Source information:
Chemical mapping of a 207-nucleotide RNA with 2A3. 2A3 adducts were read by reverse transcription with SuperScript II with manganese. The data come from the RNA Mapping Database (RMDB), library RNAMAK. Conditions: 150 mM KOAc, 10 mM MgCl2 and 150 mM bicine (pH 8.5), 24 C.
[RMDB]
RNA sequence: GGGAACGACUCGAGUAGAGUCGAAAACGUGCUGAUUCGUCAGCACGAAAAAAUCCUAAGUCGAGUCAACAGCGUUCCAAGGACAUGUCGGAAACGACAACAGCCUUGAGACGACAUGACUCGAUAUGGAAAAAAGGGGUGUCUUCGGACACCCCAAGUUCUACCCCAGUUUCGACUGGGGUAGAACAAAAGAAACAACAACAACAAC
Reactivity to 2A3 in 0.01 (KOAc 150mM, MgCl2 10mM, bicine 150mM(pH8.5), 24C), signal-to-noise 2, nucleotides 027 to 156: c020g000u000g000c000u000g000a050u050u010c180g090u030c110a000g000c000a000c000g000a000a000a000a000a000a000u050c050c000u060a160a010g010u010c000g020a000g000u010c020a050a040c070a220g020c000g110u300u010c030c000a010a000g020g000a070c050a140u030g000u010c010g030g010a060a110a130c020g000a000c020a010a010c060a010g000c010c000u040u010g050a040g010a060c010g010a140c000a050u030g000a000c010u000c000g000a000u000a000u020g020g000a000a050a010a100a050a080g000g010g000g010u030g010u030c020u030u120c300g070g000a000c000a000c030c010c010c010a000a010